[RMDB]
RNA sequence: GGGAACGACUCGAGUAGAGUCGAAAACGAUUAGCAUUCGUGCUAAUCGAAUCAGGUAGUACCUAUCUCUAUUACCUGUAGUGGCGAACGUCCGGACAGAGAAUCGAGUCCUGUUCGCAGGACUCAAGCUCUUUGUAGAAUUCGUUCUACAAAGAGCAAAAGAAACAACAACAACAAC
Reactivity to DMS in 0.01 (KOAc 150mM, MgCl2 10mM, bicine 150mM(pH8.5), 24C), signal-to-noise 6, nucleotides 027 to 126: c000g010a010u000u000a000g010c000a040u000u010c220g030u000g020c000u000a010a000u000c000g000a060a070u010c010a010g000g000u000a000g010u010a060c180c100u010a130u010c070u000c070u000a020u000u010a010c000c000u000g010u000a100g020u010g010g020c080g010a080a060c080g010u010c030c030g010g010a080c160a090g010a080g000a100a120u010c150g010a020g010u000c000c000u000g010u010u010c170g000c000a010g000g000a010c010u000c010a060a090
Reactivity to 2A3 in 0.01 (KOAc 150mM, MgCl2 10mM, bicine 150mM(pH8.5), 24C), signal-to-noise 9, nucleotides 027 to 126: c010g000a000u000u000a000g000c010a010u020u050c210g100u060g000c000u000a000a010u000c000g000a010a070u080c010a000g020g000u010a010g010u020a040c030c030u110a140u160c070u000c010u030a030u040u030a020c010c000u010g030u070a080g060u060g080g020c050g040a150a060c050g090u020c030c010g020g030a040c040a050g090a010g060a090a100u200c110g000a010g000u000c000c000u010g020u040u050c250g000c040a000g000g000a000c000u000c020a000a010